Source: RMDB library OK2TRN, as collected in RNAgym. Chemical mapping of a 177-nucleotide RNA with DMS and 2A3. In probing experiments dimethyl sulfate is read out at A N1 and C N3, which are open when not base-paired. The reactions ran in a buffer of 150 mM KOAc, 10 mM MgCl2 and 150 mM bicine (pH 8.5), at 24 C. DMS adducts were read by reverse transcription with MarathonRT.
RNA sequence: GGGAACGACUCGAGUAGAGUCGAAAAAGGGGGUUAGCAAUGAUGGUGGAAUGUGAUGGACAUCAUUAUCCAAAGUACAUGUAUGAAGACAUGAGUUGGUGUGAACUUUAUAUACAGAGAUAUGAAAACUUACAUGACCAUUCGUGGUCAUGUAAGUAAAAGAAACAACAACAACAAC
Reactivity to DMS in 0.01 (KOAc 150mM, MgCl2 10mM, bicine 150mM(pH8.5), 24C), signal-to-noise 4, nucleotides 027 to 126: a080g010g000g010g020g010u010u010a080g030c110a090a070u000g010a070u000g010g050u000g020g000a110a090u010g020u010g010a080u000g000g010a080c080a050u000c070a030u000u010a090u010c020c040a050a040a080g010u010a080c060a020u000g010u000a210u010g000a090a140g010a060c030a020u010g010a070g010u000u000g000g000u010g000u010g000a040a080c060u000u000u000a030u000a080u000a100c090a080g010a110g010a050u000a050u000g000a090a080a080
Reactivity to 2A3 in 0.01 (KOAc 150mM, MgCl2 10mM, bicine 150mM(pH8.5), 24C), signal-to-noise 2, nucleotides 027 to 126: a000g070g020g000g000g000u010u020a000g030c040a080a030u050g050a050u070g050g070u010g010g000a090a060u080g010u050g020a100u070g020g040a040c030a050u050c010a050u060u130a030u000c020c020a040a000a010g050u070a060c020a020u010g070u090a090u230g130a020a020g070a020c000a000u030g020a020g060u010u040g060g040u020g010u000g040a000a000c010u050u110u040a100u020a010u010a090c050a040g110a040g040a050u020a050u220g100a080a090a000